Structure probing data (DMS and 2A3) for a 207-nucleotide construct.
The reactions ran in a buffer of 150 mM KOAc, 10 mM MgCl2 and 150 mM bicine (pH 8.5), at 24 C.
For DMS the reverse transcriptase was MarathonRT.
[RMDB]
RNA sequence: GGGAACGACUCGAGUAGAGUCGAAAAUGGAUCCAAUAGUGACCUGGGUACACCAAUCGGAAUAUUGAAUUUGGGGAAGUCAAGGGCUGGGAUCAAGAGGUGGAUUGGAACUAAUGCCAUGUAGGAUGGUAUGACAAGGCAACACUGUAUUGCUCUCCGGCAUAUUGUAGUUCGCUACAAUAUGCCGAAAAGAAACAACAACAACAAC
Reactivity to DMS in 0.01 (KOAc 150mM, MgCl2 10mM, bicine 150mM(pH8.5), 24C), signal-to-noise 1, nucleotides 027 to 156: u010g010g000a070u010c020c010a080a120u000a120g020u000g010a120c040c020u010g030g030g040u000a100c030a080c030c080a080a160u030c030g040g010a150a120u020a160u020u010g050a090a090u010u010u000g020g000g000g030a080a060g020u000c050a100a030g020g020g000c050u020g010g040g000a040u000c020a060a080g000a050g030g000u000g000g010a100u030u000g020g050a100a120c010u010a120a050u000g000c000c020a020u020g010u000a090g040g030a060u000g000g050u000a010u010g020a070c060a040a040g050g030c020a030a100c010a100c070u000g020u000a110u010u000g020c050u010c010u000c010
Reactivity to 2A3 in 0.01 (KOAc 150mM, MgCl2 10mM, bicine 150mM(pH8.5), 24C), signal-to-noise 3, nucleotides 027 to 156: u100g050g050a040u010c020c030a060a040u170a130g090u070g070a120c020c020u000g050g000g000u070a050c080a030c030c020a010a060u090c070g040g060a130a070u090a120u120u130g040a160a070u100u050u090g040g120g000g010a030a010g060u090c100a050a060g090g000g000c020u050g010g010g020a030u030c040a020a010g030a010g020g070u010g020g030a080u040u090g020g010a040a020c040u050a080a020u120g020c060c070a020u060g020u070a040g050g160a030u020g000g010u030a040u060g020a020c020a090a030g030g000c010a000a040c040a040c070u070g030u130a110u050u020g020c000u010c020u010c100